The record gives the reactivity of an RNA of 177 nucleotides to 2A3 and DMS.
It was measured as part of the RMDB libraries RFM100 and RFMREP.
For DMS the reverse transcriptase was MarathonRT.
Values cover nucleotides 27 to 126.
The reactions ran in a buffer of 150 mM KOAc, 10 mM MgCl2 and 150 mM bicine (pH 8.5), at 24 C.
2A3 adducts were read by reverse transcription with SuperScript II with manganese.
RNA sequence: GGGAACGACUCGAGUAGAGUCGAAAAGGGUGGCAACACCCAUGAUAGAUAAAAUCCGUUCAGUAAUGAAUGGAGGUUUGUUUUAAUUAGUCGUUUGUGUGAGAGUUUGUGAAAACAAUCACAUAUACAGCAUUCAAGGAUUCGUCCUUGAAUGCUGAAAAGAAACAACAACAACAAC
Reactivity to 2A3 in 0.01 (KOAc 150mM, MgCl2 10mM, bicine 150mM(pH8.5), 24C), signal-to-noise 3, nucleotides 027 to 126: g020g010g000u070g010g020c060a120a080c000a060c030c000c000a010u040g000a000u020a040g070a000u150a080a070a000a020u010c000c000g000u000u000c000a020g100u250a290a120u030g000a020a000u000g050g000a010g040g010u120u070u070g030u020u030u030u040a150a240u040u100a140g030u050c080g030u030u120u040g040u000g000u000g000a050g020a000g000u000u030u000g160u040g150a040a100a000a000c020a000a000u000c000a000c000a000u010a000u010a020
Reactivity to DMS in 0.01 (KOAc 150mM, MgCl2 10mM, bicine 150mM(pH8.5), 24C), signal-to-noise 3, nucleotides 027 to 126: g010g000g020u000g010g000c300a100a120c000a000c010c000c010a060u020g000a160u030a040g000a140u030a030a070a070a130u000c020c010g000u000u010c010a010g000u030a130a180u010g000a020a010u000g080g010a010g000g010u020u000u000g000u010u000u000u040a050a140u040u030a080g010u000c110g020u010u000u010g030u000g000u000g010a000g000a300g000u000u000u000g010u070g000a160a030a010a010c000a040a260u010c000a010c000a020u010a050u000a160